[RMDB]
RNA sequence: GGGAACGACUCGAGUAGAGUCGAAAAUAUGUGCUUAAUUGCUGCCAUGACCUCGUGGCAACACAGGAUGGUGCCUUCACAAAACGCGGUGGCCUGUCGUCCGGGGACCCCGUCACCAGUGUGUCCAGACGUUGCCGGGAUUCGUCCCGGCAACGUCAAAAGAAACAACAACAACAAC
Reactivity to 2A3 in 0.01 (KOAc 150mM, MgCl2 10mM, bicine 150mM(pH8.5), 24C), signal-to-noise 1, nucleotides 027 to 126: u150a000u000g050u000g010c000u180u300a210a080u300u090g000c000u140g000c000c000a060u010g070a190c000c000u120c030g090u050g000g100c070a130a090c040a000c000a070g120g110a020u020g010g000u030g030c040c000u170u300c120a070c020a080a010a090a120c050g020c030g000g110u000g000g060c050c050u120g030u070c120g020u000c000c100g050g000g000g040a020c000c000c000c000g020u000c000a020c050c040a090g050u000g000u000g000u090c050c070a030